[RMDB]
RNA sequence: GGGAACGACUCGAGUAGAGUCGAAAAAGAAUACUUUUAGUACAAGCGAGUACACGCAGUAUAGUGCUACUUGUGUGAGUAUACUUUUAGUACAAGCGAGUACACGCAGUAUACUGCCACUUGUGUGUCCUGUGGCUAAAUUCGUUUAGCCACAGGAAAAAGAAACAACAACAACAAC
Reactivity to 2A3 in 0.01 (KOAc 150mM, MgCl2 10mM, bicine 150mM(pH8.5), 24C), signal-to-noise 4, nucleotides 027 to 126: a010g170a100a040u120a110c030u060u170u170u180a030g050u070a020c020a080a030g050c050g040a000g060u090a050c060a010c110g010c020a000g000u030a020u030a070g190u030g010c020u000a020c000u000u010g000u020g040u110g120a030g030u100a020u040a120c050u080u030u140u300a050g000u000a030c030a060a010g000c000g040a020g000u030a030c070a000c190g000c000a010g090u040a010u000a000c000u000g000c010c060a000c010u030u020g010u010g040u030g030
Reactivity to DMS in 0.01 (KOAc 150mM, MgCl2 10mM, bicine 150mM(pH8.5), 24C), signal-to-noise 3, nucleotides 027 to 126: a100g010a130a070u020a070c020u010u010u020u020a080g050u020a040c010a070a090g000c030g000a060g000u050a060c130a150c260g000c060a050g020u000a050u000a030g000u010g000c060u000a030c010u010u000g010u000g000u040g020a220g010u000a040u000a010c110u010u030u030u020a110g010u000a000c020a130a300g020c010g000a040g000u000a070c190a120c230g000c100a020g000u000a020u000a000c090u000g000c000c090a030c010u020u000g000u000g010u000g020

Overview:
Source: RMDB library OK1LIB, as collected in RNAgym. An RNA of 177 nucleotides, treated with 2A3 and DMS and read out base by base. Reactivities are rounded to 0.1 and cut off at 0 and 3. Reactivities are given for positions 27 through 126. 2A3 adducts were read by reverse transcription with SuperScript II with manganese.